[RMDB]
RNA sequence: GGGAACGACUCGAGUAGAGUCGAAAAAAACUGAUAGGUAUGCACGGACAAUGGAAGAAUUCAAUACUGAAGAUCGACCGGUGACUCCACCUAUGGAAUUUUCAUGGGAAUUCGAGGAGAAAUUCGAGAAUAGGUUAGAGUUCGCUCUAACCUAUUCAAAAGAAACAACAACAACAAC
Reactivity to DMS in 0.01 (KOAc 150mM, MgCl2 10mM, bicine 150mM(pH8.5), 24C), signal-to-noise 6, nucleotides 027 to 126: a050a050a080c070u010g000a080u000a050g010g000u010a030u010g000c060a040c060g010g000a110c120a060a070u040g010g000a080a110g000a050a050u000u010c030a050a070u030a100c160u000g000a040a020g000a060u000c030g000a150c060c010g000g000u020g010a100c070u000c070c040a120c000c010u010a010u030g010g020a050a080u010u010u010u010c010a040u010g010g000g000a090a060u030u010c060g000a100g000g000a090g000a070a050a070u020u020c050g000a190
Reactivity to 2A3 in 0.01 (KOAc 150mM, MgCl2 10mM, bicine 150mM(pH8.5), 24C), signal-to-noise 6, nucleotides 027 to 126: a000a000a000c080u080g030a050u030a070g060g010u070a040u110g060c020a030c050g050g050a040c070a080a040u100g040g010a030a020g020a040a040u030u010c010a030a090u060a220c070u050g020a020a020g050a180u030c020g030a020c010c000g030g040u030g040a070c000u000c030c000a000c000c000u010a020u030g030g070a060a090u110u080u070u090c030a040u040g080g000g030a050a080u100u050c040g030a080g020g020a050g090a020a050a010u130u080c040g030a020
Record summary:
The record gives the reactivity of an RNA of 177 nucleotides to DMS and 2A3. Source: RMDB library OK1LIB, as collected in RNAgym. The DMS profile rests on 12,756 reads. The RNA was probed in 150 mM KOAc, 10 mM MgCl2 and 150 mM bicine (pH 8.5) at 24 C. Reactivities are given for positions 27 through 126.